[RMDB]
RNA sequence: GGGAACGACUCGAGUAGAGUCGAAAAUCUAUCACCAGCCCAUGUUUACGACACGAAUGGGCUGUUGCAAAUUACGUAUAGCUCUUGCAACAUCGAGUCGAAACGUUCCCAAGCUAUACGCCACAAAUCAACCCAAUGGAUUCGUCCAUUGGGUUGAAAAAGAAACAACAACAACAAC
Reactivity to 2A3 in 0.01 (KOAc 150mM, MgCl2 10mM, bicine 150mM(pH8.5), 24C), signal-to-noise 2, nucleotides 027 to 126: u000c000u020a120u090c010a010c080c020a000g000c000c010c000a000u050g130u120u170u090a140c090g060a060c070a020c220g130a090a020u020g010g010g000c010u000g000u000u000g010c020a020a060a110u210u120a050c010g020u010a010u010a010g020c000u000c060u180u080g040c060a070a020c010a130u040c010g010a000g020u000c000g030a150a100a010c050g010u020u000c000c000c000a000a030g000c000u000a010u000a010c010g060c060c000a120c020a060a060a080
Reactivity to DMS in 0.01 (KOAc 150mM, MgCl2 10mM, bicine 150mM(pH8.5), 24C), signal-to-noise 3, nucleotides 027 to 126: u000c030u000a080u000c080a120c120c030a020g010c000c000c010a010u000g000u010u000u010a070c110g020a080c100a150c130g040a190a040u000g000g020g030c000u000g000u000u000g000c090a040a120a120u010u010a110c020g000u000a030u000a000g010c000u030c200u020u000g000c080a040a070c110a070u000c030g000a020g000u000c050g000a070a060a210c080g000u000u000c000c000c000a140a000g000c000u010a020u000a010c000g030c210c130a080c150a050a060a110